The record gives the reactivity of an RNA of 177 nucleotides to 2A3 and DMS. The DMS profile rests on 541 reads. The RNA was probed in 150 mM KOAc, 10 mM MgCl2 and 150 mM bicine (pH 8.5) at 24 C.
RNA sequence: GGGAACGACUCGAGUAGAGUCGAAAACUCACUUCCAAAAGGAGGAGCGGGGGGACUUGGAACACGAGGGGACCAGUCCAGUCCGUGGGAACUACCCCGGAACUCCCGCUCUCCACACUCCUUCCCCCACAAACUAACUGUUCGCAGUUAGUUUGUGAAAAGAAACAACAACAACAAC
Reactivity to 2A3 in 0.01 (KOAc 150mM, MgCl2 10mM, bicine 150mM(pH8.5), 24C), signal-to-noise 1, nucleotides 027 to 126: c010u030c030a050c050u190u070c070c060a100a060a060a080g000g020a010g000g040a020g030c020g000g000g020g010g010g010a000c010u010u160g040g020a120a020c050a020c100g040a150g040g040g020g010a000c010c010a000g000u000c010c010a020g060u000c020c000g000u230g000g000g010a120a190c080u190a150c060c010c000c000g030g020a020a010c000u020c010c010c010g000c010u000c000u010c010c010a010c000a000c010u060c000c000u000u030c020c000c000c000
Reactivity to DMS in 0.01 (KOAc 150mM, MgCl2 10mM, bicine 150mM(pH8.5), 24C), signal-to-noise 1, nucleotides 027 to 126: c030u020c060a110c080u000u000c060c100a150a080a150a120g010g000a020g000g010a030g000c010g000g040g000g040g000g000a050c020u000u000g060g000a040a160c110a060c130g020a090g000g000g010g020a180c000c020a020g000u000c050c060a130g000u000c030c000g000u000g000g000g000a130a090c230u000a210c030c000c020c010g000g020a070a260c170u000c010c000c030g010c020u000c020u000c040c070a030c160a300c030u000c000c030u000u000c000c000c000c010